[RMDB]
RNA sequence: GGGAACGACUCGAGUAGAGUCGAAAACCACCUCGGAUAGUAUCGGCGUCGAAAUGUGGGAUGCUAAGUUAGUUUACCGGCUAGCUUUCAAGAUUUAAGGUAAAAACUAUUGAGAAUUUGUUUCUGGUGACUCUCUCAAUAGUAUUUCACCAGAUGCGACCACUACAAGGUUCGCCUUGUAGUGGUCAAAAGAAACAACAACAACAAC
Reactivity to 2A3 in 0.01 (KOAc 150mM, MgCl2 10mM, bicine 150mM(pH8.5), 24C), signal-to-noise 2, nucleotides 027 to 156: c000c000a030c000c010u040c070g090g070a140u040a170g070u120a060u080c070g020g000c030g020u060c030g050a000a100a140u210g010u080g060g020g010a020u000g010c030u060a120a040g020u000u020a010g010u040u060u030a040c000c020g000g000c040u010a000g000c000u050u080u040c130a080a040g010a070u120u190u210a190a080g040g020u080a040a100a000a000a060c000u000a000u020u000g010a000g000a080a120u260u180u050g000u000u000u000c000u000g020g000u010g000a020c000u000c000u010c000u000c040a030a020u020a030g030u070a040u010u170u020c000a000c010c010a000g000a010u000g000c030